[RMDB]
RNA sequence: GGGAACGACUCGAGUAGAGUCGAAAAGUGGGGAGGAAGAAGUGUAACUCACCAGCCUCUGCUCUUAUCUUUGUAAUAAAUGUUAAAGCCAGAAGUUGCCAUUUCUCUCUAAACAUAUCUACACUCCCCUAGGAACCAGUUUCGACUGGUUCCUAGGAAAAGAAACAACAACAACAAC
Reactivity to 2A3 in 0.01 (KOAc 150mM, MgCl2 10mM, bicine 150mM(pH8.5), 24C), signal-to-noise 1, nucleotides 027 to 126: g050u060g020g020g000g000a040g040g000a000a030g070a150a040g010u070g030u080a060a030c040u010c060a080c030c000a010g020c000c000u090c080u060g010c000u010c000u050u020a040u000c010u110u130u040g040u040a110a130u090a090a240a030u070g020u040u070a140a080a020g030c110c040a000g030a050a000g040u000u020g010c000c000a000u010u040u000c010u040c010u000c000u000a040a040a020c020a080u080a070u080c030u090a050c050a030c100u050c000c020
Reactivity to DMS in 0.01 (KOAc 150mM, MgCl2 10mM, bicine 150mM(pH8.5), 24C), signal-to-noise 1, nucleotides 027 to 126: g020u020g000g000g020g000a030g010g030a070a080g000a090a150g020u010g000u010a040a110c170u000c070a080c160c020a070g010c010c010u000c000u000g000c020u000c080u020u000a020u000c040u000u020u010g010u000a130a120u030a030a040a030u010g010u000u000a030a040a060g010c300c070a040g020a000a060g010u000u000g000c070c060a080u000u000u010c020u000c030u000c060u010a070a080a040c110a070u010a070u000c070u000a080c160a070c110u000c080c080